This 207-nucleotide RNA was probed chemically with DMS and 2A3. The 2A3 profile rests on 5,091 reads. The RNA was probed in 150 mM KOAc, 10 mM MgCl2 and 150 mM bicine (pH 8.5) at 24 C. 2A3 is a SHAPE reagent: it acylates the 2'-hydroxyl of flexible nucleotides of all four kinds.

[RMDB]
RNA sequence: GGGAACGACUCGAGUAGAGUCGAAAAACACCAAAACUGAAAACGGAAGGCAAUCCUUCCACGACGAUACUUACUUUCCUUUGAUCGUCGUUACUAUUGGCAUAGCCACAAAGGAGAACAAACAUGAGCGCGGACACUGACUUCGGUCAGUGUCCAAUCUUGUCUAUCUGUUCGCAGAUAGACAAGAAAAAGAAACAACAACAACAAC
Reactivity to DMS in 0.01 (KOAc 150mM, MgCl2 10mM, bicine 150mM(pH8.5), 24C), signal-to-noise 2, nucleotides 027 to 156: a080c050a150c040c030a060a050a140a300c170u000g020a090a040a070a070c080g030g040a090a000g030g040c150a170a090u010c010c000u000u000c010c000a050c000g000a040c000g000a090u000a020c050u000u000a050c040u010u000u020c010c010u020u000u000g000a040u000c030g000u010c010g030u000u010a080c100u000a180u010u000g000g050c030a140u000a110g030c010c050a120c090a020a090a050g020g010a080g010a040a180c090a160a070a100c110a070u010g030a130g000c100g010c110g050g000a000c000a000c000u000g000a010c000u010u000c240g050g020u010c000a000g010u020g040u000c000c000a020a020
Reactivity to 2A3 in 0.01 (KOAc 150mM, MgCl2 10mM, bicine 150mM(pH8.5), 24C), signal-to-noise 6, nucleotides 027 to 156: a000c080a130c040c040a060a030a050a080c110u200g050a070a050a030a090c050g000g000a000a000g010g000c150a050a180u240c000c000u000u000c000c000a000c000g000a000c000g010a010u100a200c040u080u030a050c010u050u130u080c020c000u050u040u040g020a010u010c000g010u000c000g000u010u040a040c060u100a110u050u070g010g020c080a220u060a100g020c020c000a040c060a030a040a020g020g010a030g040a090a030c070a100a120a020c050a120u180g080a040g100c130g000c080g050g000a000c000a000c000u000g000a000c000u030u050c140g030g000u000c000a000g000u000g000u000c000c000a000a000